The record gives the reactivity of an RNA of 177 nucleotides to 2A3 and DMS. It was measured as part of the RMDB library OK2TRN. Conditions: 150 mM KOAc, 10 mM MgCl2 and 150 mM bicine (pH 8.5), 24 C. Reactivities are given for positions 27 through 126. The 2A3 profile rests on 1,806 reads.
RNA sequence: GGGAACGACUCGAGUAGAGUCGAAAAUCACCGCGGAGGACGCUGGUUGGGCUGCAGAUGACUACGGCGAGUGCGCACCACACGACAACCAGCACCGUGAAGCAGUUCACUGAGCAUCUGGCGGCAACGUCGCCAUGACUUUCGAGUCAUGGCGACGAAAAGAAACAACAACAACAAC
Reactivity to 2A3 in 0.01 (KOAc 150mM, MgCl2 10mM, bicine 150mM(pH8.5), 24C), signal-to-noise 2, nucleotides 027 to 126: u110c030a030c040c000g060c020g010g200a080g080g020a050c090g000c050u040g010g000u060u100g030g070g000c000u000g000c060a010g030a230u140g070a220c080u100a040c190g050g000c030g000a080g090u020g010c080g000c040a080c070c010a010c020a010c050g170a050c040a050a030c020c010a000g010c000a020c020c000g000u010g040a030a010g030c070a030g000u020u010c010a010c030u050g020a020g070c020a020u050c030u050g130g010c000g020g000c010a080a010
Reactivity to DMS in 0.01 (KOAc 150mM, MgCl2 10mM, bicine 150mM(pH8.5), 24C), signal-to-noise 2, nucleotides 027 to 126: u000c080a200c050c000g010c020g040g020a110g000g050a030c060g000c020u000g000g000u000u000g020g000g000c040u000g000c020a080g020a140u000g010a110c090u000a070c030g040g000c050g020a070g010u020g000c000g000c040a030c100c050a050c060a070c090g000a150c080a040a060c050c040a070g000c060a140c030c080g000u000g020a170a150g010c020a020g000u000u000c020a020c030u000g000a100g010c040a030u000c000u000g010g020c000g020g000c080a100a080